[RMDB]
RNA sequence: GGGAACGACUCGAGUAGAGUCGAAAAUACUCAUGGGAAGUCGGCACGACUCCCGACUAACGUGGAUGUCCGCCGUUUAGCUCAUUGGUCGGAGCUGUCGUGCGGACGUUGAGUAACAGCUAGCCAACAUAGUCGGCUUAUUCGUAAGCCGACUAUGAAAAGAAACAACAACAACAAC
Reactivity to DMS in 0.01 (KOAc 150mM, MgCl2 10mM, bicine 150mM(pH8.5), 24C), signal-to-noise 4, nucleotides 027 to 126: u030a030c010u010c010a080u020g020g030g040a110a090g010u000c010g010g000c170a100c060g010a040c060u000c030c000c010g000a020c050u030a030a100c120g000u000g000g000a080u050g020u000c000c000g000c010c010g030u030u020u010a010g010c000u000c030a180u010u020g030g040u000c140g010g000a010g000c040u000g000u000c010g010u030g020c010g000g010a000c010g000u000u000g000a060g000u000a040a040c150a060g010c090u000a050g000c050c030a090a230
Reactivity to 2A3 in 0.01 (KOAc 150mM, MgCl2 10mM, bicine 150mM(pH8.5), 24C), signal-to-noise 4, nucleotides 027 to 126: u070a000c010u040c030a040u050g050g000g090a130a090g040u000c000g070g090c070a040c210g130a030c000u000c000c000c010g020a020c000u110a150a040c030g040u100g070g030a100u110g030u050c000c000g000c010c000g030u020u020u070a000g000c000u010c000a070u070u090g130g040u080c060g040g020a030g010c040u010g010u000c050g000u130g010c010g030g030a000c000g000u000u010g020a000g000u010a050a000c010a000g040c020u040a010g060c020c020a000a010
Chemical mapping of a 177-nucleotide RNA with DMS and 2A3.
For 2A3 the reverse transcriptase was SuperScript II with manganese.
Source: RMDB library OK1LIB, as collected in RNAgym.
Conditions: 150 mM KOAc, 10 mM MgCl2 and 150 mM bicine (pH 8.5), 24 C.